[RMDB]
RNA sequence: GGGAACGACUCGAGUAGAGUCGAAAAGAAAGGCAGCCAGUGCAGCCCACGCAGCCAAUCGACGCAUGCUUUUGCAUGCCGCCCACGACUGAGGGCAGCUGCGGCACUGAGGGCAGCUGCCGAAAGAGACGUCCUAUUACUUCGGUAAUAGGACGUCAAAAGAAACAACAACAACAAC
Reactivity to 2A3 in 0.01 (KOAc 150mM, MgCl2 10mM, bicine 150mM(pH8.5), 24C), signal-to-noise 2, nucleotides 027 to 126: g080a010a150a010g010g030c020a030g000c020c030a010g020u020g060c030a130g090c020c030c010a030c020g000c000a000g010c030c000a010a090u090c160g070a100c070g000c010a000u010g010c030u200u220u300u300g000c010a000u000g000c020c010g020c020c020c010a080c080g290a100c150u200g080a180g010g000g000c000a000g000c000u010g010c000g040g000c060a030c020u030g000a090g070g150g020c060a000g000c000u000g000c000c000g000a010a010a000g100a010
Reactivity to DMS in 0.01 (KOAc 150mM, MgCl2 10mM, bicine 150mM(pH8.5), 24C), signal-to-noise 2, nucleotides 027 to 126: g010a100a180a130g020g010c030a020g030c020c000a030g020u000g000c010a080g000c000c020c040a290c050g020c010a000g030c010c030a100a100u000c170g000a050c240g020c000a000u000g020c000u000u010u020u010g000c000a000u000g000c040c130g010c010c000c030a090c130g000a120c240u000g000a110g020g000g000c020a070g010c000u000g010c020g000g030c080a000c040u000g000a130g000g000g000c140a130g000c000u000g000c000c000g000a030a070a090g010a210